[RMDB]
RNA sequence: GGGAACGACUCGAGUAGAGUCGAAAAGAUUUACGGCGGGAAACGCGCCGAGGUCACGGGUGCGGCACCGACCGAAAGGCGCGGAAAGGUCCCGUGUGCGGCACCGACCGAAACCGCCGGAAAGAAAGAUGAUUACUCCAUUCGUGGAGUAAUCAUCAAAAGAAACAACAACAACAAC
Reactivity to 2A3 in 0.01 (KOAc 150mM, MgCl2 10mM, bicine 150mM(pH8.5), 24C), signal-to-noise 1, nucleotides 027 to 126: g060a000u010u060u130a040c000g010g020c000g010g010g040a090a120a000c010g020c000g020c000c010g040a060g030g010u050c080a030c170g020g000g020u220g080c080g050g000c040a010c000c020g000a030c010c000g030a070a080a010g000g000c020g000c000g010g000a020a020a000g000g000u000c000c080c020g000u000g030u020g060c080g050g000c040a030c020c050g010a020c000c040g000a110a000a010c000c010g010c010c000g000g010a010a010a000g060a030a090a010
Reactivity to DMS in 0.01 (KOAc 150mM, MgCl2 10mM, bicine 150mM(pH8.5), 24C), signal-to-noise 3, nucleotides 027 to 126: g000a140u000u010u000a080c020g000g000c000g010g010g000a070a110a120c050g020c000g010c000c000g000a140g000g010u000c070a060c150g020g010g000u000g000c050g010g030c050a120c030c020g000a030c000c000g000a040a130a220g000g000c010g010c000g010g010a020a120a180g010g000u000c020c100c060g020u000g000u000g000c090g010g000c100a040c030c150g000a050c030c010g010a050a080a210c000c000g000c010c000g000g000a010a030a030g010a090a100a110
An RNA of 177 nucleotides, treated with 2A3 and DMS and read out base by base.
DMS adducts were read by reverse transcription with MarathonRT.
The reactions ran in a buffer of 150 mM KOAc, 10 mM MgCl2 and 150 mM bicine (pH 8.5), at 24 C.
Source: RMDB library OK2TRN, as collected in RNAgym.